[RMDB]
RNA sequence: GGGAACGACUCGAGUAGAGUCGAAAACAAUAGGAGACCCAUGGAGAGUAUCCAGAGGUUCCUAAGGCCUCGAUCGCGCCUGCCGGGAGAAAAGCAGAAUGUCCUGGUUCUCCAAAUAAGACGUCAAGAUGGUAGGGUGGUUCGCCACCCUACCAUCAAAAGAAACAACAACAACAAC
Reactivity to 2A3 in 0.01 (KOAc 150mM, MgCl2 10mM, bicine 150mM(pH8.5), 24C), signal-to-noise 1, nucleotides 027 to 126: c020a020a040u130a120g000g050a020g030a020c000c030c020a000u010g020g000a040g000a060g030u300a000u030c000c000a000g000a010g080g010u000u010c030c060u070a050a050g030g140c000c000u000c080g070a040u000c070g020c000g040c000c000u000g000c030c000g040g000g020a000g050a050a000a000a000g010c100a110g000a300a140u170g060u190c000c000u080g020g010u000u000c000u040c040c030a010a030a030u130a100a070g040a020c050g060u090c110a090a000
Chemical mapping of a 177-nucleotide RNA with 2A3. The RNA was probed in 150 mM KOAc, 10 mM MgCl2 and 150 mM bicine (pH 8.5) at 24 C. For 2A3, 477 sequencing reads were counted.